[RMDB]
RNA sequence: GGGAACGACUCGAGUAGAGUCGAAAAUUUAUCACUGAGAGAAUUUUUACGGUGCCGGAAGCAUGGAGGGUAAAGAGCAGGACACCGAUAAUCGCCAUCAGUACACCGGCAAACAGCCAUCGGGUCACAUCGGUCGCGUAUUCGUACGCGACCGAUGAAAAGAAACAACAACAACAAC
Reactivity to 2A3 in 0.01 (KOAc 150mM, MgCl2 10mM, bicine 150mM(pH8.5), 24C), signal-to-noise 1, nucleotides 027 to 126: u020u140u130a250u120c000a010c180u280g000a000g000a000g000a160a040u050u000u000u000u070a040c000g000g000u040g040c040c000g130g000a120a000g080c000a000u120g000g080a070g010g050g010u070a070a150a000g080a000g080c050a000g000g010a000c000a140c010c000g000a000u090a090a000u160c090g000c020c000a080u070c000a000g070u040a000c000a010c080c040g010g000c000a000a120a180c050a090g000c000c000a070u000c050g010g020g000u080c010a010
The data come from the RNA Mapping Database (RMDB), library OK1LIB. Chemical mapping of a 177-nucleotide RNA with 2A3. Conditions: 150 mM KOAc, 10 mM MgCl2 and 150 mM bicine (pH 8.5), 24 C.